RNA sequence: GGGAACGACUCGAGUAGAGUCGAAAACAACUGGAUGGCAGCAACUUCUGGAAACAUUGGAUCAGCACAAGUGAUGGACAAUGUGGUUUACCACUUGUCGCACUCAGCGACGGGCACAUAUUGGGAACUUUGCAUGUUGCUUCGGCAACAUGCAAAGAAAAGAAACAACAACAACAAC
Reactivity to 2A3 in 0.01 (KOAc 150mM, MgCl2 10mM, bicine 150mM(pH8.5), 24C), signal-to-noise 1, nucleotides 027 to 126: c040a000a070c010u100g100g010a050u010g090g010c010a010g000c010a050a030c000u120u000c040u110g100g020a110a030a000c000a060u000u120g030g030a020u050c050a030g020c060a010c030a050a030g040u040g110a040u090g060g010a010c000a060a000u180g040u070g030g030u020u100u180a160c000c000a030c020u000u020g010u010c030g010c000a000c000u150c080a000g030c020g070a120c000g010g010g040c050a040c050a020u170a110u060u110g010g000g070a070a030
Reactivity to DMS in 0.01 (KOAc 150mM, MgCl2 10mM, bicine 150mM(pH8.5), 24C), signal-to-noise 1, nucleotides 027 to 126: c060a110a090c170u000g020g000a090u000g000g000c040a100g000c070a050a040c090u000u000c030u000g000g010a080a050a100c100a070u020u000g000g000a060u000c070a080g000c010a030c150a110a010g000u000g000a040u000g020g010a020c040a030a030u030g000u000g010g000u000u000u000a060c030c030a060c050u000u000g020u000c030g000c030a010c040u000c080a140g000c040g020a050c070g000g010g010c060a000c060a070u010a040u000u010g010g000g010a080a140